[RMDB]
RNA sequence: GGGAACGACUCGAGUAGAGUCGAAAAGAAUGGCAGCAGAGUGCGGCCGAGGUCCGCGUACUUUUUUGUACGCCCGUCGAGACCCCGACGGAGGGUCGGACCGAGCACUACGGCCGCUGCCUAAGAAACCGUGCAUUAGCUUCGGCUAAUGCACGGUAAAAGAAACAACAACAACAAC
Reactivity to DMS in 0.01 (KOAc 150mM, MgCl2 10mM, bicine 150mM(pH8.5), 24C), signal-to-noise 1, nucleotides 027 to 126: g010a140a060u000g030g020c010a000g010c030a090g030a180g000u000g000c050g000g020c070c110g020a280g000g020u000c000c000g000c090g020u010a000c020u000u010u020u030u000u010g000u000a000c040g000c060c040c040g020u000c010g030a220g000a220c040c040c040c000g020a010c010g030g000a110g030g000g010u000c090g020g010a030c010c000g000a170g010c030a080c140u000a170c090g010g040c030c010g000c000u010g010c000c010u010a060a090g000a050a120

The record gives the reactivity of an RNA of 177 nucleotides to DMS. The DMS profile rests on 794 reads. The RNA was probed in 150 mM KOAc, 10 mM MgCl2 and 150 mM bicine (pH 8.5) at 24 C.